[RMDB]
RNA sequence: GGGAACGACUCGAGUAGAGUCGAAAACAACCCAAUUUGGCAGUACAUUGAAUAUGCUUUAGAUGUGGCAAUCUACCAUCAUUCAAAGCAACCGCCAAAUCUAUCGGGUCCAAACGAGUCAGUGUUCUCGUGCACCUGCAUUCGUGCAGGUGCACGAAAAAGAAACAACAACAACAAC
Reactivity to 2A3 in 0.01 (KOAc 150mM, MgCl2 10mM, bicine 150mM(pH8.5), 24C), signal-to-noise 1, nucleotides 027 to 126: c090a020a050c000c000c000a000a090u030u000u000g040g000c080a070g000u090a110c030a160u140u230g040a040a000u130a050u150g050c000u000u090u090a030g000a000u000g000u090g120g120c250a170a210u060c070u150a000c000c000a000u150c000a020u100u060c000a000a000a000g030c070a070a100c030c010g000c000c000a010a000a000u000c010u010a040u180c210g000g000g000u160c040c040a120a000a000c010g000a000g040u030c070a000g040u060g000u030u000c000
Conditions: 150 mM KOAc, 10 mM MgCl2 and 150 mM bicine (pH 8.5), 24 C. This 177-nucleotide RNA was probed chemically with 2A3. Reactivities are given for positions 27 through 126.